An RNA of 177 nucleotides, treated with 2A3 and DMS and read out base by base. The reactions ran in a buffer of 150 mM KOAc, 10 mM MgCl2 and 150 mM bicine (pH 8.5), at 24 C. Source: RMDB library RFMREP, as collected in RNAgym. 2A3 is a SHAPE reagent: it acylates the 2'-hydroxyl of flexible nucleotides of all four kinds. DMS (dimethyl sulfate) methylates the pairing face of unpaired adenines and cytosines.
[RMDB]
RNA sequence: GGGAACGACUCGAGUAGAGUCGAAAAAUUACCGGACUCACAAAACCCAACCACAAGUUCGGUUGGUGCGUCUGUCCGGGUCGGGGCGCGUAAGCCGCCCAACCUCAUCCCGUUCCCUCGCGGAACACGUAUCUCUUAACUUCGGUUAAGAGAUACGAAAAGAAACAACAACAACAAC
Reactivity to 2A3 in 0.01 (KOAc 150mM, MgCl2 10mM, bicine 150mM(pH8.5), 24C), signal-to-noise 3, nucleotides 027 to 126: a000u120u090a070c010c000g030g000a000c000u010c020a000c010a020a050a060a010c040c000c000a000a000c030c010a030c070a250a080g120u180u100c060g050g020u010u000g000g000u000g000c000g000u010c020u020g000u000c010c010g000g010g000u000c050g010g000g010g000c020g010c020g110u200a090a100g060c080c010g010c010c020c000a010a050c010c010u080c010a120u050c000c030c000g000u000u020c010c000c010u040c110g030c120g000g010a000a010c040a000
Reactivity to DMS in 0.01 (KOAc 150mM, MgCl2 10mM, bicine 150mM(pH8.5), 24C), signal-to-noise 2, nucleotides 027 to 126: a110u000u010a130c020c000g020g010a020c000u000c190a010c000a050a090a130a190c120c000c000a000a010c000c020a060c060a220a090g020u020u000c160g010g010u000u000g000g010u000g010c160g010u000c110u000g000u000c000c010g010g020g020u020c220g010g000g000g010c020g040c020g000u020a060a120g020c210c050g000c000c000c000a050a070c060c090u000c110a140u000c010c020c000g040u000u000c000c000c000u020c190g010c160g000g000a070a020c150a240